RNA sequence: GGGAACGACUCGAGUAGAGUCGAAAAGGGAUGGGAUCCGAAGCCCCUUUGAGGGAUAAUACAGGCUCUCCCAUCCAACUCCUAUUCCAACACGUCCUCGUCGUACAGAGUGGUAACAUGUGUCACCUAUACUAAUGACCGUUCGCGGUCAUUAGAAUCGAAAUUAGAGCUUCGGCUCUAAUUUCGAAAAAGAAACAACAACAACAAC
Reactivity to 2A3 in 0.01 (KOAc 150mM, MgCl2 10mM, bicine 150mM(pH8.5), 24C), signal-to-noise 1, nucleotides 027 to 156: g150g010g010a040u030g000g000g000a050u230c040c040g040a030a040g040c000c000c010c000u160u150u180g190a280g000g000g010a030u070a290a020u080a230c130a010g000g000c000u000c000u000c000c000c000a000u010c000c010a000a020c010u020c000c000u030a080u060u000c040c090a030a010c010a040c050g050u000c010c010u020c010g060u030c010g000u070a060c070a070g040a050g040u060g020g030u170a130a000c040a050u140g040u010g030u070c000a110c050c020u040a010u120a300c000u010a020a000u000g000a000c000c000g040u060u050c220g010c030g040g000u000c020a000u000u000a000g030a000a050